[RMDB]
RNA sequence: GGGAACGACUCGAGUAGAGUCGAAAACAUAAGACCUGAGAGCUAAUGAGCCACAUACCUACCCAAGGUGAAAGCUCCUUCUCUCGCAAUGUGUAACUCAUGAUUCUCAUGACCCCUGGUUGGAGAGCGCGCUAACACGCCUUCGGGCGUGUUAGAAUCUCAACUCUUCUUUCGAGAAGAGUUGAGAAAAAGAAACAACAACAACAAC
Reactivity to DMS in 0.01 (KOAc 150mM, MgCl2 10mM, bicine 150mM(pH8.5), 24C), signal-to-noise 1, nucleotides 027 to 156: c030a030u000a060a080g000a120c040c030u010g000a060g030a040g050c300u000a070a100u000g000a100g000c020c060a050c120a300u020a060c050c050u000a190c110c190c210a180a060g000g000u000g000a040a180a140g050c010u010c000c090u000u000c050u000c020u000c000g050c050a080a130u010g000u000g000u000a040a170c040u000c000a050u000g030a100u000u010c100u000c040a070u010g000a130c070c020c000c070u020g030g060u020u000g000g010a090g000a120g000c060g020c050g000c000u010a010a020c010a000c010g010c000c030u000u010c300g040g050g100c000g000u000g020u000u000a000g000a070a070